Chemical mapping of a 177-nucleotide RNA with 2A3 and DMS.
In probing experiments dimethyl sulfate is read out at A N1 and C N3, which are open when not base-paired.
2A3 adducts were read by reverse transcription with SuperScript II with manganese.
For DMS the reverse transcriptase was MarathonRT.
The data come from the RNA Mapping Database (RMDB), library OK2TRN.
Conditions: 150 mM KOAc, 10 mM MgCl2 and 150 mM bicine (pH 8.5), 24 C.

RNA sequence: GGGAACGACUCGAGUAGAGUCGAAAAUACGCGAUCGCGUAGCGCGCUAGCAUAUGCCGUAAUAUUAAUUACGAUUAGCGCGCAUAUAUUAUAGCUAUAUACGCGGCAUAUAUCGGCGCCGUAGCGCCACUGUGCAACAGUUCGCUGUUGCACAGUGAAAAGAAACAACAACAACAAC
Reactivity to 2A3 in 0.01 (KOAc 150mM, MgCl2 10mM, bicine 150mM(pH8.5), 24C), signal-to-noise 8, nucleotides 027 to 126: u120a020c040g050c030g150a230u140c090g020c010g020u030a070g010c010g000c000g010c020u010a020g030c050a090u090a070u300g040c030c000g020u010a030a060u090a100u260u260a280a080u060u040a030c030g050a060u040u050a010g010c010g000c010g000c020a000u030a000u000a000u030u110a110u100a040g020c020u020a010u010a000u000a200c040g000c000g040g000c050a030u120a000u010a020u140c060g030g000c020g000c040c060g110u080a040g020c000g000c010
Reactivity to DMS in 0.01 (KOAc 150mM, MgCl2 10mM, bicine 150mM(pH8.5), 24C), signal-to-noise 9, nucleotides 027 to 126: u000a040c070g010c070g000a100u010c140g010c010g020u000a100g010c040g020c010g010c010u000a050g010c260a070u000a040u010g010c040c010g000u000a020a020u000a120u000u010a080a060u000u000a020c030g000a150u010u000a040g010c010g010c010g020c000a010u000a010u010a050u000u010a120u010a140g000c160u000a020u000a080u000a040c040g010c010g000g000c040a030u000a040u010a070u010c120g000g010c010g030c030c230g000u000a110g010c010g000c070